This 177-nucleotide RNA was probed chemically with DMS and 2A3. Values are in units of 0.01, from 0 to 300, in steps of 10. For DMS, 8,527 sequencing reads were counted.
[RMDB]
RNA sequence: GGGAACGACUCGAGUAGAGUCGAAAAGAUAUGGAUCGCCACUGGAGCUACUCGGAAACGAGUUAGCGUUGAAAGUGGACGAUCCUAAGUCAAAAGUGCCUACUACUGUUCGCAGUAGUAGGCACAACCUAUGAAUACCGUUCGCGGUAUUCAUAGGAAAAGAAACAACAACAACAAC
Reactivity to DMS in 0.01 (KOAc 150mM, MgCl2 10mM, bicine 150mM(pH8.5), 24C), signal-to-noise 5, nucleotides 027 to 126: g010a040u000a300u010g010g000a010u000c000g010c000c000a000c000u000g000g010a120g020c000u000a020c000u000c000g020g010a080a090a260c000g010a010g010u010u000a000g010c000g020u000u010g000a110a140a020g010u000g010g000a110c010g000a010u000c000c000u000a010a090g010u010c040a070a070a140a120g000u000g000c000c000u000a010c000u000a000c000u000g000u010u020c190g010c010a010g000u000a000g020u000a000g000g010c000a000c010a010a060
Reactivity to 2A3 in 0.01 (KOAc 150mM, MgCl2 10mM, bicine 150mM(pH8.5), 24C), signal-to-noise 3, nucleotides 027 to 126: g020a010u060a010u140g000g000a010u010c000g000c010c000a000c010u020g090g000a020g000c000u000a000c000u020c010g020g030a060a070a050c010g000a000g040u120u130a010g000c000g020u080u030g030a060a050a010g000u040g000g040a020c000g000a000u000c010c000u000a020a010g040u030c030a030a050a050a140g000u010g000c000c000u000a000c000u010a000c000u010g050u080u130c300g000c170a000g000u010a000g020u000a010g000g010c000a000c000a000a010